[RMDB]
This 207-nucleotide RNA was probed chemically with 2A3. Conditions: 150 mM KOAc, 10 mM MgCl2 and 150 mM bicine (pH 8.5), 24 C. The data come from the RNA Mapping Database (RMDB), library M2RFPK.

RNA sequence: GGGAACGACUCGAGUAGAGUCGAAAAGCCGCGGCAAGUGGAGUUAGCGAGAAGAGACUAGGCUUUGGUUUCUUCAAGUGAAGCGGUCACCAAUCAUGUGUGGUAGUUACCGUAAAAAAUCCGGAUUAAUGCCUCAGCGCGUUCGCGCGCUGAGGAAGCAAUCCGUUUAGUUCGCUAAACGGAUUGCAAAAGAAACAACAACAACAAC
Reactivity to 2A3 in 0.01 (KOAc 150mM, MgCl2 10mM, bicine 150mM(pH8.5), 24C), signal-to-noise 1, nucleotides 027 to 156: g040c000c010g050c000g060g030c060a110a210g040u100g080g040a110g040u080u040a010g030c020g010a020g010a050a000g000a000g010a010c020u060a030g100g210c180u190u200u080g000g000u000u000u000c000u030u010c020a030a000g000u010g010a060a020g000c000g030g010u030c000a010c010c010a000a100u070c030a050u090g120u030g000u010g070g010u010a060g040u070u090a030c000c070g010u030a200a000a000a050a000a050u040c050c020g080g000a100u060u160a110a060u190g010c000c010u010c000a010g010c040g030c000g000u030u060c160g010c010g000c000g000c000u000g000a000g010g000a000a000